[RMDB]
RNA sequence: GGGAACGACUCGAGUAGAGUCGAAAAGGUGAGGCGGAAAGCAAAUUAAAUAACGUCAACCCAUCGGGACGGUUGGCCAGUUAAGAAGUGAGGAUUCAUUCUUAUGGCCAAUUAUUAUGGGAAGUCCUCCCUGAAGGAGUUUCGACUCCUUCAGGGAAAAAGAAACAACAACAACAAC
Reactivity to 2A3 in 0.01 (KOAc 150mM, MgCl2 10mM, bicine 150mM(pH8.5), 24C), signal-to-noise 3, nucleotides 027 to 126: g090g000u080g010a090g020g040c030g050g060a210a060a010g060c150a060a000a130u280u260a080a110a110u200a080a040c010g040u000c020a030a060c000c000c000a000u090c080g030g030g030a040c050g030g000u000u010g000g000c000c010a000g050u070u140a010a000g000a020a030g110u090g090a080g130g070a160u180u110c000a010u020u070c000u000u020a070u030g000g000c000c020a010a000u020u000a050u030u140a060u070g060g000g040a030a000g000u000c010c000
Reactivity to DMS in 0.01 (KOAc 150mM, MgCl2 10mM, bicine 150mM(pH8.5), 24C), signal-to-noise 3, nucleotides 027 to 126: g020g000u030g000a070g010g020c060g040g020a050a070a100g010c150a070a100a090u030u040a050a110a050u060a040a140c050g000u000c050a080a170c050c000c010a090u000c110g010g030g020a020c120g000g010u000u000g000g000c000c020a010g000u050u040a010a000g000a000a030g020u030g000a060g000g000a110u050u000c010a080u000u000c000u030u000a050u000g000g000c000c010a000a010u000u020a090u010u000a040u000g000g000g010a060a040g000u000c030c060